[RMDB]
RNA sequence: GGGAACGACUCGAGUAGAGUCGAAAAGGCAAUAACGAACUAAUUCUAAGCAAGUAAUGGAGAAAUGCCAGGGUCACUGUCUAGCCAUAAUAGUGCUUGACAGUAUGAUACUAACUGAACAAUAAGUAAAAGCGCUGGUACUUCGGUACCAGCGCAACUUGGUAUUGGAGUUCGCUCCAAUACCAAGAAAAGAAACAACAACAACAAC
Reactivity to 2A3 in 0.01 (KOAc 150mM, MgCl2 10mM, bicine 150mM(pH8.5), 24C), signal-to-noise 2, nucleotides 027 to 156: g050g000c060a030a030u090a260a040c100g050a030a000c040u050a030a120u160u020c060u160a140a090g030c080a080a040g030u170a110a000u120g060g000a100g050a080a100a020u050g040c000c030a050g060g010g040u010c020a010c030u000g000u000c000u010a030g050c000c000a050u060a170a190u140a230g180u190g040c000u030u010g000a000c000a000g010u010a060u080g020a000u050a110c020u050a120a080c020u030g120a030a010c050a090a070u170a230a020g120u080a100a200a120a050g010c010g000c000u000g010g020u000a000c000u000u070c130g000g000u020a000c020c020a030g090c000g000c000a000a000
Chemical mapping of a 207-nucleotide RNA with 2A3. For 2A3 the reverse transcriptase was SuperScript II with manganese.